[RMDB]
RNA sequence: GGGAACGACUCGAGUAGAGUCGAAAAGUGGCGGGCUAGUCUGGGUAGGCCGGCGUUACCUAUAACCCGAAAUCGUCGAUAUGCGGGAGACGAAGCCAAAAGAAGUUGUUUUGAUCAUAUCUAAACCUGUGAUCUCAACUGAGAAGCCCCGUCCUGCGACAAGUACCAUCUUCGGAUGGUACUUGUCAAAAGAAACAACAACAACAAC
Reactivity to DMS in 0.01 (KOAc 150mM, MgCl2 10mM, bicine 150mM(pH8.5), 24C), signal-to-noise 1, nucleotides 027 to 156: g010u010g060g030c030g060g000g010c000u000a160g050u000c060u010g010g000g020u000a040g020g090c000c010g000g010c030g020u000u000a040c010c040u000a200u010a070a060c000c000c030g000a010a090a040u010c040g110u000c010g000a300u000a050u020g040c000g030g030g000a070g000a070c010g000a040a160g070c010c010a070a070a030a180g020a200a090g010u010u000g010u030u000u000u000g010a000u000c010a010u000a000u000c090u000a060a130a150c110c230u000g040u000g060a020u000c010u000c000a000a050c010u010g010a280g000a190a120g000c000c000c020c010g000u010c000c010u000g000c300
Reactivity to 2A3 in 0.01 (KOAc 150mM, MgCl2 10mM, bicine 150mM(pH8.5), 24C), signal-to-noise 1, nucleotides 027 to 156: g060u100g090g010c030g010g000g000c020u010a050g010u000c000u000g000g000g000u000a010g000g000c010c000g010g000c010g000u000u000a020c100c020u120a140u050a190a070c020c020c000g000a010a010a050u300c030g010u020c080g050a120u050a040u300g040c000g010g000g000a000g000a000c000g010a090a010g020c040c010a020a150a000a000g050a030a000g000u020u020g000u000u060u170u270g030a010u010c000a000u020a080u080c140u250a010a080a060c030c060u110g000u000g020a000u020c000u000c020a000a010c000u090g030a040g030a230a030g000c000c000c000c000g020u060c000c000u020g030c050